[RMDB]
RNA sequence: GGGAACGACUCGAGUAGAGUCGAAAAGUGCGAGUUGAGACUGAGUGCUUGUCCAGUCGGGACUCUCACCCGGGUAAUAGGCGCUCAGGUCAGGACACUGGGCUUGAGCUUGGGCGAGUGAGGGCAGCAUCCGCCUUUGCUUCGGCAAAGGCGGAUGAAAAGAAACAACAACAACAAC
Reactivity to DMS in 0.01 (KOAc 150mM, MgCl2 10mM, bicine 150mM(pH8.5), 24C), signal-to-noise 1, nucleotides 027 to 126: g010u000g000c140g000a090g020u000u010g010a300g010a060c020u010g020a080g020u000g040c090u000u010g010u010c070c010a060g000u010c010g030g000g020a090c060u000c060u000c040a020c010c030c040g020g010g000u000a100a080u000a160g020g000c190g020c000u000c000a000g000g000u000c040a020g000g000a070c190a060c160u000g010g000g000c030u030u000g000a050g010c060u000u000g000g000g010c030g000a110g020u010g020a060g010g000g000c130a100g020